Record summary: Chemical mapping of a 177-nucleotide RNA with DMS.

RNA sequence: GGGAACGACUCGAGUAGAGUCGAAAAGAAAAUAGGGUCUGUCAUAAAAUAUUUGAGGAGGUGGAUUUUUACAGCAGGGAGAAGCAGGCUGACAAGUGCCACUUGUUAAUGGUGACUACCACCUUCCACGCAAAAAGGGAUUCGUCCCUUUUUGCGUAAAAGAAACAACAACAACAAC
Reactivity to DMS in 0.01 (KOAc 150mM, MgCl2 10mM, bicine 150mM(pH8.5), 24C), signal-to-noise 2, nucleotides 027 to 126: g020a090a020a120a080u010a080g030g000g010u000c010u000g000u000c050a120u000a060a110a050a150u000a070u010u010u010g000a130g010g000a050g020g020u000g000g010a080u000u000u000u000u020a100c050a080g020c030a030g040g000g000a060g020a040a130g020c050a050g000g000c080u000g000a020c160a040a100g020u000g020c110c060a050c020u000u010g020u000u010a050a060u000g030g020u010g020a090c060u020a070c020c000a000c020c020u000u010c020c040
The reactions ran in a buffer of 150 mM KOAc, 10 mM MgCl2 and 150 mM bicine (pH 8.5), at 24 C. It was measured as part of the RMDB library OK2TRN.